Notes
An RNA of 207 nucleotides, treated with 2A3 and DMS and read out base by base. For DMS, 3,665 sequencing reads were counted. The RNA was probed in 150 mM KOAc, 10 mM MgCl2 and 150 mM bicine (pH 8.5) at 24 C. Values cover nucleotides 27 to 156. For DMS the reverse transcriptase was MarathonRT.
RNA sequence: GGGAACGACUCGAGUAGAGUCGAAAAGGGUGAGACCUAGGAACCGUAGGGGUAUUCUCAAAGGAAGCUUUUGCAGUGACGCCCAUGUAAGUGGGAUAUAACAACAGAACUCGUAUGAGUAGGCUAAUAAAUCGGACCUUCUUCGGAAGGUCCGAAACUGAAAUCUUUAGUUCGCUAAAGAUUUCAGAAAAGAAACAACAACAACAAC
Reactivity to 2A3 in 0.01 (KOAc 150mM, MgCl2 10mM, bicine 150mM(pH8.5), 24C), signal-to-noise 3, nucleotides 027 to 156: g040g000g010u050g010a070g000a050c020c030u040a040g060g040a100a050c040c050g040u070a040g000g010g020g010u040a130u110u070c060u010c030a040a050a040g070g020a030a020g030c010u080u040u100u150g000c060a010g000u020g050a030c070g030c000c010c000a010u060g070u150a120a130g020u010g010g010g050a010u040a010u020a140a030c060a020a000c020a040g110a060a040c030u040c070g050u210a090u190g010a000g020u050a020g070g000c030u040a030a020u080a140a230a040u030c010g000g010a000c000c000u000u000c000u010u010c050g050g000a010a000g000g010u000c000c000g000a000a000a000
Reactivity to DMS in 0.01 (KOAc 150mM, MgCl2 10mM, bicine 150mM(pH8.5), 24C), signal-to-noise 2, nucleotides 027 to 156: g000g040g030u000g000a140g010a120c010c030u010a140g030g020a050a060c040c060g020u000a060g000g020g030g010u000a060u000u010c010u000c040a080a080a200g020g000a110a100g010c070u020u020u000u000g030c030a090g000u010g000a120c080g000c000c050c030a050u000g000u010a060a190g020u010g010g020g000a060u010a040u000a020a160c020a080a100c020a110g020a040a060c020u010c020g020u000a100u010g000a060g010u000a060g020g030c020u000a050a070u000a030a060a160u000c020g000g000a020c000c000u000u000c000u000u010c300g030g000a020a010g020g000u000c000c030g010a000a020a050